[RMDB]
RNA sequence: GGGAACGACUCGAGUAGAGUCGAAAAAGACGCUGGCGGCGAGAAAGUCGGAUCAUUUGCCAACCAUUGAUUUUGCCGGUCAAUACGGGCACAACGUGACCGCACCGAUCAUCAGCCAGGGUAUCCAGUAUGUGGCCAAUUUCGAUUGGCCACAUACAAAAGAAACAACAACAACAAC
Reactivity to 2A3 in 0.01 (KOAc 150mM, MgCl2 10mM, bicine 150mM(pH8.5), 24C), signal-to-noise 2, nucleotides 027 to 126: a030g080a000c040g010c140u000g000g030c020g030g020c060g000a020g070a040a090a010g050u020c040g090g000a290u000c000a010u030u070u110g000c020c000a030a060c050c050a040u000u030g020a070u040u160u150u300g190c100c040g030g000u000c000a010a010u050a060c060g020g020g030c030a030c070a130a180c130g060u010g010a030c010c020g000c060a020c020c000g030a010u000c010a010u010c010a010g000c000c000a000g020g030g000u010a090u050c000c000a020
Reactivity to DMS in 0.01 (KOAc 150mM, MgCl2 10mM, bicine 150mM(pH8.5), 24C), signal-to-noise 2, nucleotides 027 to 126: a130g000a030c010g040c010u000g010g010c050g010g000c060g010a010g000a120a170a140g000u010c000g020g010a150u000c030a090u000u000u000g020c080c050a100a150c210c150a100u000u010g010a040u010u000u000u000g010c230c270g000g000u000c010a020a010u000a050c300g010g000g010c140a030c260a000a020c220g000u000g000a180c070c010g020c180a030c030c020g030a190u000c030a050u030c070a140g020c000c000a030g000g000g050u010a070u000c040c000a140
The record gives the reactivity of an RNA of 177 nucleotides to 2A3 and DMS. High 2A3 reactivity points to a flexible backbone, as in loops and unpaired stretches. 2A3 adducts were read by reverse transcription with SuperScript II with manganese. For 2A3, 1,244 sequencing reads were counted. It was measured as part of the RMDB library OK2TST. For DMS, 719 sequencing reads were counted.